[RMDB]
RNA sequence: GGGAACGACUCGAGUAGAGUCGAAAAGGAAGGGGAAGUGUCAGUGCGCAUUCAGCAGGCUGACGACAGUGAAAGUGAAAUACAGGAGGCGAUCUUCUGCGGAUUAUGGCGGGUGCGCAGACGUCGAGCGUAUGCGGGAGUUCGCUCCCGCAUACGCAAAAGAAACAACAACAACAAC
Reactivity to 2A3 in 0.01 (KOAc 150mM, MgCl2 10mM, bicine 150mM(pH8.5), 24C), signal-to-noise 1, nucleotides 027 to 126: g090g020a030a000g000g020g000g000a010a110g030u040g000u160c020a020g010u140g150c060g000c020a050u170u080c020a090g000c000a030g000g130c000u020g000a020c010g040a000c000a000g100u100g120a170a110a030g040u050g150a040a070a040u210a070c050a030g010g000a020g030g000c050g050a050u070c000u040u000c010u030g050c030g030g020a080u080u080a050u250g030g030c020g080g010g000u030g000c000g000c010a020g000a040c000g010u100c030g010a090
Reactivity to DMS in 0.01 (KOAc 150mM, MgCl2 10mM, bicine 150mM(pH8.5), 24C), signal-to-noise 2, nucleotides 027 to 126: g000g000a080a110g000g020g000g020a090a100g020u000g000u000c080a020g020u010g010c300g040c030a180u000u000c210a120g000c030a080g000g020c050u000g010a050c000g000a070c120a040g030u000g020a060a080a150g000u020g000a080a030a090u000a100c130a050g000g000a070g000g020c060g000a050u000c020u000u000c010u000g040c030g000g000a080u010u030a120u000g000g000c030g000g000g020u000g000c020g010c030a090g000a030c300g010u000c140g020a160
The record gives the reactivity of an RNA of 177 nucleotides to 2A3 and DMS. The 2A3 profile rests on 1,021 reads. The DMS profile rests on 1,004 reads. For DMS the reverse transcriptase was MarathonRT. The reactions ran in a buffer of 150 mM KOAc, 10 mM MgCl2 and 150 mM bicine (pH 8.5), at 24 C.